[RMDB]
RNA sequence: GGGAACGACUCGAGUAGAGUCGAAAACCAAGUUCGCUUGGCGUUCAUCCUAAGUCACACUGCAUGGGCGUGGAUGGAGCCACUUCGGAAACGAAGUGGCGUUGAAAUCCACGAACUACCCAUGUUGUGAUAUGGACACUUUUAAGUUCGCUUAAAACUUUUACGUCCUAUUCGUAGGACGUAAAAGAAAAGAAACAACAACAACAAC
Reactivity to 2A3 in 0.01 (KOAc 150mM, MgCl2 10mM, bicine 150mM(pH8.5), 24C), signal-to-noise 2, nucleotides 027 to 156: c010c010a030a020g070u070u130c120g000c170u040u070g040g000c000g000u040u070c060a080u080c010c020u090a170a060g030u000c010a000c010a020c090u110g010c000a000u000g000g000g000c010g000u020g000g000a010u000g000g000a000g000c000c000a000c000u000u010c010g000g040a110a070a050c010g000a010a010g000u000g010g000c000g010u080u010g010a010a000a000u000c000c000a010c010g000a040a010c030u180a080c010c000c000a000u000g000u020u010g000u010g000a010u020a030u120g020g010a030c030a050c120u150u180u070u190a170a070g020u030u050c060g040c040u050u160a060a140a110a170
Reactivity to DMS in 0.01 (KOAc 150mM, MgCl2 10mM, bicine 150mM(pH8.5), 24C), signal-to-noise 2, nucleotides 027 to 156: c000c000a060a300g000u000u010c130g020c020u020u020g000g010c030g060u000u000c080a090u000c010c060u020a070a290g030u000c040a140c000a080c250u020g000c000a180u000g000g010g010c010g010u010g000g020a060u010g010g000a300g010c020c000a000c000u030u000c000g000g030a150a130a300c010g050a010a000g010u000g010g030c000g000u010u000g010a140a160a130u000c000c000a020c020g030a080a150c010u000a300c000c010c000a010u000g000u000u020g050u010g020a030u010a230u010g000g000a020c050a080c080u000u000u040u000a080a180g010u000u000c060g030c010u010u000a100a070a090a130